[RMDB]
RNA sequence: GGGAACGACUCGAGUAGAGUCGAAAAGGGGAAUCCGGCCAAGUCCCGAAAUGUCUAGUCCCGUGGUCUCACUUCCAAAAGGAGGAGCGGGGGGACUUGGAACACGAGGGGACCAGUCCAGUCCGUGAACGGGUGAGCUUCGGCUCACCCAAAAGAAACAACAACAACAAC
Reactivity to 2A3 in 0.01 (KOAc 150mM, MgCl2 10mM, bicine 150mM(pH8.5), 24C), signal-to-noise 3, nucleotides 027 to 129: g030g000g000g020a040a040u040c030c000g000g000c030c000a040a000g000u030c000c010c000g000a010a050a070u190g040u040c060u030a010g080u030c000c000c000g050u030g000g140u040c000u000c010a300c030u060u010c080c050a060a200a030a010g020g000a010g020g030a040g000c010g010g000g010g000g000g000a000c000u000u010g000g000a000a000c020a040c050g040a070g000g020g020g000a000c020c000a000g000u000c020c000a010g040u000c000c020g040u050g080a050a030c090
Reactivity to DMS in 0.01 (KOAc 150mM, MgCl2 10mM, bicine 150mM(pH8.5), 24C), signal-to-noise 2, nucleotides 027 to 129: g090g040g010g050a060a030u020c010c000g020g030c000c080a040a030g050u000c000c000c000g000a060a060a130u040g020u070c140u070a060g010u000c040c000c000g000u010g010g020u000c010u020c030a150c040u050u060c050c230a080a040a150a190g000g020a090g000g000a150g020c020g040g060g030g000g000g010a020c010u040u030g070g030a090a000c090a080c070g030a080g000g000g000g000a050c070c040a010g000u020c060c010a060g010u030c050c070g030u040g000a090a140c000

Chemical mapping of a 170-nucleotide RNA with 2A3 and DMS.
It was measured as part of the RMDB library 15KLIB.
For 2A3 the reverse transcriptase was SuperScript II with manganese.
For 2A3, 5,806 sequencing reads were counted.